RNA sequence: GGGAACGACUCGAGUAGAGUCGAAAAGACCCGCGGGUCUCCGAAUGGGCGAACCCGCCAGGAGAUGUCCUGGCAUCCCCCUUGGGAACUCAUACCUUGGGGGAGGACAACCCGGGGAACUGAAACACGAGUGAUGCUUGUUCGCAAGCAUCACUCGAAAAGAAACAACAACAACAAC
Reactivity to 2A3 in 0.01 (KOAc 150mM, MgCl2 10mM, bicine 150mM(pH8.5), 24C), signal-to-noise 1, nucleotides 027 to 126: g110a020c000c000c000g060c050g080g000g000u000c020u060c080c000g030a180a200u240g000g000g000c000g020a010a090c000c000c000g000c000c000a010g060g000a120g060a160u190g210u170c000c000u000g010g030c010a060u050c000c000c000c000c060u020u020g010g010g010a170a130c090u030c210a090u110a110c030c000u000u000g000g080g000g000g000a000g000g000a000c020a030a180c060c000c000g000g030g000g000a020a020c020u040g070a050a000a000c110a050
This 177-nucleotide RNA was probed chemically with 2A3. Conditions: 150 mM KOAc, 10 mM MgCl2 and 150 mM bicine (pH 8.5), 24 C. Source: RMDB library RFM100, as collected in RNAgym. Values cover nucleotides 27 to 126. The 2A3 profile rests on 512 reads.